[RMDB]
The record gives the reactivity of an RNA of 177 nucleotides to DMS. Source: RMDB library VIROID, as collected in RNAgym. Values cover nucleotides 27 to 126.

RNA sequence: GGGAACGACUCGAGUAGAGUCGAAAAGCCGAGGGGGGUGGCUAGGAACCCGGGGGACCGGUGGAGCCAUGGGAUGCUCCUCCCGAUGUCCGUCCAACCCCCUCCCCCCGAGUGUCGCCCAGGAAUGCGUUUUAGGUAUGUUCGCAUACCUAAAACGAAAAGAAACAACAACAACAAC
Reactivity to DMS in 0.01 (KOAc 150mM, MgCl2 10mM, bicine 150mM(pH8.5), 24C), signal-to-noise 1, nucleotides 027 to 126: g000c140c010g040a190g030g020g040g000g060g000u020g040g000c110u000a090g000g000a080a090c160c140c050g000g030g030g020g000a030c070c030g000g000u000g000g000a020g020c000c160a300u020g000g050g000a300u000g010c000u000c000c020u000c300c030c000g010a120u000g000u000c000c000g020u020c020c020a070a120c020c010c100c020c020u000c000c000c000c000c000c000g020a190g000u000g000u000c110g000c000c010c020a170g020g010a110a080u020g060